Annotation:
The record gives the reactivity of an RNA of 207 nucleotides to 2A3. Values are in units of 0.01, from 0 to 300, in steps of 10. Conditions: 150 mM KOAc, 10 mM MgCl2 and 150 mM bicine (pH 8.5), 24 C.
RNA sequence: GGGAACGACUCGAGUAGAGUCGAAAAUGAGACAGAGUUUCACUCCUGUUGCCCAGGCUGGAGUGCAAUGGCGAGAUCUUGUCUCAUUGCAACCUCUGCCUCACGGGUUCAAGCGAUUCUCUUGCCUCAGCCUCUGGAGUAGCUGGGAUUACAGGCAACCUGAUCUAGGGUUCGCCCUAGAUCAGGUAAAAGAAACAACAACAACAAC
Reactivity to 2A3 in 0.01 (KOAc 150mM, MgCl2 10mM, bicine 150mM(pH8.5), 24C), signal-to-noise 2, nucleotides 027 to 156: u030g040a030g030a030c110a090g120a040g100u020u030u080c050a090c080u090c040c010u000g040u050u060g040c000c000c000a000g050g000c020u030g000g010a010g010u040g000c040a030a050u070g050g050c070g050a040g040a110u120c030u160u180g090u020c000u040c040a090u010u010g000c030a000a150c000c000u030c100u090g050c000c000u090c020a060c090g000g040g000u050u100c030a080a010g020c050g020a060u100u010c030u000c030u070u090g040c020c000u050c040a000g010c000c010u030c020u060g110g000a090g030u110a050g050c000u010g000g000g080a030u150u270a020c050a060g000g000c040a030